[RMDB]
RNA sequence: GGGAACGACUCGAGUAGAGUCGAAAAGAUAUGGAAUCGGCCAAUAUGAUGGUUACCAGCGAGGAUCGUGUCAUUCGGAAACGAAUGCACGGGAGCUGAACCAUCAUAUUGGCCGAUUCCUAAGUCACAUGAGACAUUACUUCGGUAAUGUCUCAUGAAAAGAAACAACAACAACAAC
Reactivity to DMS in 0.01 (KOAc 150mM, MgCl2 10mM, bicine 150mM(pH8.5), 24C), signal-to-noise 2, nucleotides 027 to 126: g000a040u010a300u000g010g020a010a010u000c000g040g000c000c010a020a000u000a000u000g000a000u010g010g000u000u010a110c300c000a020g020c000g000a070g010g010a030u000c010g000u000g010u020c020a020u000u000c000g000g000a100a110a230c000g010a000a000u000g000c010a010c010g000g000g000a020g020c000u010g020a050a020c000c000a000u000c000a010u010a000u000u000g030g010c000c000g010a000u000u010c000c000u010a000a050g010u000c040a300